[RMDB]
RNA sequence: GGGAACGACUCGAGUAGAGUCGAAAAGUUGUAAACUUCGGUUUACAACAAAUAAGAGAGAAAAGCUCUCCAUCGCUCUUCCAAGCGACAACGGAACCAAAAAAACCCAGCUCUUCGGAGCUGGGAACUACUUACCUUCGUUCGCGAAGGUAAGUAGAAAAGAAACAACAACAACAAC
Reactivity to 2A3 in 0.01 (KOAc 150mM, MgCl2 10mM, bicine 150mM(pH8.5), 24C), signal-to-noise 1, nucleotides 027 to 126: g000u000u000g000u000a010a010a010c020u030u070c160g030g000u040u010u000a000c000a000a000c000a030a030a000u150a040a010g000a000g000a000g030a020a220a030a240g150c020u020c010u000c030c000a110u000c010g010c020u010c000u140u060c070c020a000a000g010c000g040a010c030a050a000c020g050g100a010a030c040c040a050a010a000a000a030a070a120c020c000c000a000g000c010u000c010u030u070c180g130g000a000g000c010u000g000g000g000a010a000
Reactivity to DMS in 0.01 (KOAc 150mM, MgCl2 10mM, bicine 150mM(pH8.5), 24C), signal-to-noise 1, nucleotides 027 to 126: g000u000u000g000u000a010a000a010c040u000u020c130g020g000u000u000u000a020c000a040a000c000a040a120a050u010a110a120g000a040g000a010g000a180a060a120a300g010c050u000c010u000c000c120a060u010c000g050c000u000c060u010u000c020c030a230a160g000c040g000a010c050a040a020c040g010g010a080a050c030c140a000a000a080a030a120a070a280c000c000c000a000g000c000u000c000u000u060c150g010g000a010g000c010u000g010g030g020a010a000